An RNA of 177 nucleotides, treated with DMS and read out base by base.
RNA sequence: GGGAACGACUCGAGUAGAGUCGAAAAUCUUGUGUAUCUGUUGAUGUUUGAGCAGGUGCGCCUUCUGGCGAAAGGCCUUGGCGCAGACAUCGCACCGGAAGGGCUUCUCGCCCGUGUGGGUGCGCAAUAGUCUAAGGCGGUUCGCCGCCUUAGACUAAAAAGAAACAACAACAACAAC
Reactivity to DMS in 0.01 (KOAc 150mM, MgCl2 10mM, bicine 150mM(pH8.5), 24C), signal-to-noise 1, nucleotides 027 to 126: u000c040u000u010g010u020g020u000a030u020c080u010g000u000u000g000a060u000g000u000u000u010g060a080g000c080a040g000g030u000g030c070g010c010c040u000u000c220u000g010g010c020g010a080a090a110g000g000c000c020u000u010g030g010c000g050c030a010g010a060c100a050u010c010g020c040a070c020c050g000g020a250a210g000g010g000c000u010u000c260u030c150g000c000c000c040g010u000g030u010g010g000g040u000g020c010g000c140a060a120
Source: RMDB library OK2TRN, as collected in RNAgym. DMS adducts were read by reverse transcription with MarathonRT. The reactions ran in a buffer of 150 mM KOAc, 10 mM MgCl2 and 150 mM bicine (pH 8.5), at 24 C.